[RMDB]
An RNA of 177 nucleotides, treated with DMS and read out base by base. Conditions: 150 mM KOAc, 10 mM MgCl2 and 150 mM bicine (pH 8.5), 24 C. For DMS the reverse transcriptase was MarathonRT. Source: RMDB library M2PK50, as collected in RNAgym.
RNA sequence: GGGAACGACUCGAGUAGAGUCGAAAAUCAUGCACGUUCGCGUGCAUGAAAAGGCGGCGAGUAUCGCUCAGGGGCGCGCUACAGCGCGCAGCGCAGCUGGAAAAAGAUGAAUCUUCGGAUUCAUCAAUCCCGUGUUAACGUUCGCGUUAACACGGGAAAAAGAAACAACAACAACAAC
Reactivity to DMS in 0.01 (KOAc 150mM, MgCl2 10mM, bicine 150mM(pH8.5), 24C), signal-to-noise 1, nucleotides 027 to 126: u000c000a010u000g000c000a000c000g020u000u020c300g030c010g030u000g000c010a000u000g000a000a010a100a120g020g000c010g000g020c010g080a040g000u020a010u000c100g010c000u010c030a120g000g010g000g000c070g020c030g010c050u000a100c300a250g070c070g020c000g030c000a040g000c010g010c050a040g000c020u000g000g000a010a070a040a180a140g010a000u000g000a020a000u000c000u000u000c140g060g000a020u010u000c010a010u000c000a050a030